[RMDB]
Overview:
The record gives the reactivity of an RNA of 177 nucleotides to 2A3 and DMS. It was measured as part of the RMDB libraries RFM100 and RFMREP. DMS (dimethyl sulfate) methylates the pairing face of unpaired adenines and cytosines. Conditions: 150 mM KOAc, 10 mM MgCl2 and 150 mM bicine (pH 8.5), 24 C. Reactivities are given for positions 27 through 126.

RNA sequence: GGGAACGACUCGAGUAGAGUCGAAAAUGCGGCACCGGAGCUCGCCAGCACGCAGGAGUGAGGUGAGGAGGACGGCGGCCAGGGCGCGGAGAGCUUGCCGGCGCUCCGCCACCGCCGCUACCUCCUUCUUAUAAUAUAGGUUCGCCUAUAUUAUAAGAAAAGAAACAACAACAACAAC
Reactivity to 2A3 in 0.01 (KOAc 150mM, MgCl2 10mM, bicine 150mM(pH8.5), 24C), signal-to-noise 6, nucleotides 027 to 126: u130g010c020g030g000c020a020c030c020g040g040a020g030c030u030c030g070c010c010a040g030c030a010c060g020c040a030g020g090a040g030u120g030a030g010g080u080g040a020g010g000a010g020g010a190c060g010g000c000g000g000c040c090a160g030g030g000c090g000c000g010g000a010g000a000g000c030u120u140g140c070c040g030g000c010g010c000u000c000c000g000c000c000a010c000c010g000c000c000g000c000u010a010c000c000u000c000c000u000u000
Reactivity to DMS in 0.01 (KOAc 150mM, MgCl2 10mM, bicine 150mM(pH8.5), 24C), signal-to-noise 6, nucleotides 027 to 126: u020g020c040g010g000c020a050c040c020g000g000a130g010c040u000c050g020c020c040a080g000c060a040c040g020c070a090g000g000a080g020u000g000a160g010g010u020g000a040g000g000a020g000g000a110c080g000g000c000g010g010c110c130a160g020g000g000c300g020c010g010g010a010g010a030g010c010u000u010g010c250c130g000g020c020g000c000u000c000c010g010c010c070a140c020c050g000c020c000g000c020u000a060c000c000u000c010c000u000u000